[RMDB]
RNA sequence: GGGAACGACUCGAGUAGAGUCGAAAAUAACCGCGAACGGUUGCUUGCGACUUGUGUGUGCGCAAAAUAGACACGCAUAGCAGUGCAAUAACCACGAUUGCAGCUACGACUUGCGCCGAAAUCGUUAACGUGGUCCAGUAUUCGUACUGGACCACGUAAAAGAAACAACAACAACAAC
Reactivity to DMS in 0.01 (KOAc 150mM, MgCl2 10mM, bicine 150mM(pH8.5), 24C), signal-to-noise 2, nucleotides 027 to 126: u010a120a150c030c000g000c050g020a080a120c060g000g000u000u030g030c040u000u000g030c010g020a080c180u010u000g030u010g020u000g000u000g000c010g000c150a080a050a110a150u010a120g000a090c120a080c040g000c020a090u000a050g010c030a050g000u000g000c020a020a040u010a060a120c160c060a140c240g030a070u000u000g000c020a040g000c010u010a090c030g000a110c120u010u000g000c040g050c000c020g000a090a060a040u000c010g000u000u000a070
Reactivity to 2A3 in 0.01 (KOAc 150mM, MgCl2 10mM, bicine 150mM(pH8.5), 24C), signal-to-noise 1, nucleotides 027 to 126: u070a000a020c010c040g020c040g030a030a050c040g090g040u130u290g040c050u000u030g000c010g120a140c120u120u040g010u000g020u000g000u000g110c060g020c070a100a050a100a020u150a020g040a000c000a010c050g010c020a010u020a020g000c030a070g070u010g060c010a000a000u020a070a050c060c070a060c090g030a010u000u030g000c020a040g000c020u050a020c040g220a150c040u010u040g000c030g050c000c000g040a100a000a030u020c060g000u110u100a040